Chemical mapping of a 177-nucleotide RNA with DMS.
It was measured as part of the RMDB library OK2TST.
DMS adducts were read by reverse transcription with MarathonRT.
RNA sequence: GGGAACGACUCGAGUAGAGUCGAAAACGGGGUCGGUCCAGCCGGCGUGCGGCACCGAGAUGAUCGACCACACGAGCGCGGUCAUGCCGAUGAUCGAGGCCACCAUGCCGGGCACGUCGGGCUUGCAUAGUACUGGACCUUUCGAGGUCCAGUACUAAAAAGAAACAACAACAACAAC
Reactivity to DMS in 0.01 (KOAc 150mM, MgCl2 10mM, bicine 150mM(pH8.5), 24C), signal-to-noise 1, nucleotides 027 to 126: c120g000g010g020g010u000c000g020g000u000c030c190a120g010c010c010g040g010c030g050u000g030c040g010g000c050a130c020c050g000a190g020a060u010g000a050u000c010g010a060c030c060a140c100a080c180g000a100g030c130g020c020g030g000u000c030a090u000g000c080c080g000a100u000g000a030u000c030g010a080g010g000c090c080a130c160c120a080u000g010c000c000g030g030g020c020a020c010g010u010c000g000g030g000c070u010u020g000c200a140